Structure probing data (DMS and 2A3) for a 177-nucleotide construct. Values cover nucleotides 27 to 126. The data come from the RNA Mapping Database (RMDB), library TTRDES.

[RMDB]
RNA sequence: GGGAACGACUCGAGUAGAGUCGAAAAGAUAUGGACUAUGUGCGACGAUAAGACGGUGUCGGAAACGACACCCGUCUUUUGACGUCGCCAUAGUCCUAAGUCAAAGAACACGGUUCGCCGUGUUCAAUCAGUUUUUAUCCUUCGGGAUAAAAACUGAAAAAGAAACAACAACAACAAC
Reactivity to DMS in 0.01 (KOAc 150mM, MgCl2 10mM, bicine 150mM(pH8.5), 24C), signal-to-noise 2, nucleotides 027 to 126: g000a010u000a160u010g000g010a000c000u000a000u000g030u000g040c010g020a010c000g020a100u010a000a020g010a020c000g000g010u000g010u010c010g000g000a030a020a030c000g010a010c000a000c080c060c060g010u000c000u000u000u000u020g020a120c060g020u000c010g000c040c020a000u000a000g000u010c000c010u000a000a060g000u000c010a160a180a190g010a000a010c010a010c010g000g040u000u010c260g030c000c000g050u000g010u000u000c000a090a160
Reactivity to 2A3 in 0.01 (KOAc 150mM, MgCl2 10mM, bicine 150mM(pH8.5), 24C), signal-to-noise 1, nucleotides 027 to 126: g010a010u030a000u060g020g020a000c010u000a000u030g250u200g020c040g000a000c030g110a220u080a300a010g010a000c000g000g000u000g000u020c000g000g000a030a010a000c000g000a020c000a020c030c000c020g020u000c000u020u010u020u160g150a080c080g000u000c000g000c000c010a000u010a000g020u000c000c010u000a000a000g000u030c020a000a000a090g000a000a000c000a000c020g000g070u080u060c280g050c120c010g000u000g000u000u010c010a000a000